[RMDB]
Conditions: 150 mM KOAc, 10 mM MgCl2 and 150 mM bicine (pH 8.5), 24 C. An RNA of 207 nucleotides, treated with DMS and read out base by base. Values cover nucleotides 27 to 156.
RNA sequence: GGGAACGACUCGAGUAGAGUCGAAAAGAUAUGGAGUUGGUGAGGACGCAGAAAAUACGAGUGGGUGGAAUCUUGGAUUUAGCUAUCGGAAACGAUAGCUUGUCAGAUUCCACCCACUCGUAUUUUCUGAACUACGUUGUAGCCAACUCCUAAGUCAGGUACAUUAUAACUUCGGUUAUAAUGUACCAAAAGAAACAACAACAACAAC
Reactivity to DMS in 0.01 (KOAc 150mM, MgCl2 10mM, bicine 150mM(pH8.5), 24C), signal-to-noise 1, nucleotides 027 to 156: g020a110u000a190u020g010g020a050g030u000u010g000g030u000g000a300g000g010a020c010g000c030a010g000a000a010a030a020u000a020c000g010a050g030u000g030g000g040u000g000g030a030a010u010c000u000u010g030g000a040u040u000u000a010g030c010u010a000u000c020g040g000a170a120a290c020g020a040u000a000g010c000u000u020g020u000c020a070g000a070u000u000c000c010a010c000c000c000a000c010u000c000g000u000a000u000u000u000u010c000u000g010a050a300c050u000a110c000g010u000u000g020u000a300g010c000c000a000a040c020u010c010c010u000a010a050g020u010c040a140